[RMDB]
RNA sequence: GGGAACGACUCGAGUAGAGUCGAAAAGCUGAUUCUCAAACUCUGAACAGGUGAGUCAUAUUAAUUCUCUUUAUUGGAUUUUGGUAUUAAAUGAUGCAUGCAUCAUGAACAAUAGAAGCUCUUAGUGGACCGAUAUCAAUUUCGAUUGAUAUCGGUCAAAAGAAACAACAACAACAAC
Reactivity to 2A3 in 0.01 (KOAc 150mM, MgCl2 10mM, bicine 150mM(pH8.5), 24C), signal-to-noise 3, nucleotides 027 to 126: g000c020u010g010a070u130u050c020u000c020a090a020a050c040u030c000u070g160a120a020c070a040g110g010u050g030a020g030u040c010a020u070a080u180u110a040a040u090u000c060u000c000u090u250u080a250u080u110g050g060a090u110u010u060u040g070g020u100a140u200u080a090a070a040u030g000a020u000g020c090a050u140g010c000a010u020c000a030u020g030a040a040c010a090a000u100a080g110a050a010g010c020u000c020u070u130a090g130u120g180
Reactivity to DMS in 0.01 (KOAc 150mM, MgCl2 10mM, bicine 150mM(pH8.5), 24C), signal-to-noise 3, nucleotides 027 to 126: g010c090u010g000a110u000u020c020u000c050a090a080a130c050u010c060u000g010a060a090c150a070g030g000u010g020a050g000u000c080a060u020a070u000u030a050a100u020u000c030u000c030u010u020u020a130u010u030g000g010a110u000u000u000u000g010g000u010a040u030u020a060a080a030u010g000a030u000g020c040a090u000g000c020a000u000c000a010u000g000a080a140c160a030a070u010a070g000a080a080g000c070u000c040u000u000a110g020u020g040
Annotation:
Chemical mapping of a 177-nucleotide RNA with 2A3 and DMS. As a SHAPE reagent, 2A3 marks flexible, mostly unpaired nucleotides at the ribose 2'-OH.